[RMDB]
RNA sequence: GGGAACGACUCGAGUAGAGUCGAAAAGCACUCCUUUUCGAAGGAGUGCCCAGGCGCGCGGGCUUUGUCCUGUCGCGUGUGCGCCGCGCGCGAUAUACGCGCAUCUGUGCAUAUUCGUAUGCACAAAACAAAUUGCUCAUUUCGAUGAGCAAUUUGUAAAAGAAACAACAACAACAAC
Reactivity to 2A3 in 0.01 (KOAc 150mM, MgCl2 10mM, bicine 150mM(pH8.5), 24C), signal-to-noise 1, nucleotides 027 to 126: g020c010a000c010u030c000c040u020u010u040u130c190g040a020a000g020g000a010g000u000g000c000c010c000a040g030g000c020g000c010g000c000g030g020g040c000u240u150u240g080u060c010c000u040g060u210c000g000c000g010u000g040u020g020c050g020c000c030g010c010g000c000g000c020g000a010u080a020u040a180c060g000c010g020c030a080u050c080u080g010u010g020c020a000u000a010u020u070c170g080u010a010u000g030c040a020c000a000a070a000
Reactivity to DMS in 0.01 (KOAc 150mM, MgCl2 10mM, bicine 150mM(pH8.5), 24C), signal-to-noise 1, nucleotides 027 to 126: g020c000a000c000u000c000c000u010u010u010u030c140g020a040a020g010g030a010g030u010g010c010c010c050a070g000g020c010g000c010g010c010g010g000g010c020u010u020u010g020u010c020c020u000g020u010c040g020c010g030u000g040u000g020c070g020c030c060g020c110g020c000g020c000g000a180u000a060u000a060c070g000c010g040c070a110u010c140u030g000u010g010c000a010u000a020u000u010c140g010u000a000u000g000c000a000c000a050a040a070
The record gives the reactivity of an RNA of 177 nucleotides to 2A3 and DMS. High 2A3 reactivity points to a flexible backbone, as in loops and unpaired stretches. The data come from the RNA Mapping Database (RMDB), library M2PK50. For DMS, 1,388 sequencing reads were counted. DMS adducts were read by reverse transcription with MarathonRT. The reactions ran in a buffer of 150 mM KOAc, 10 mM MgCl2 and 150 mM bicine (pH 8.5), at 24 C.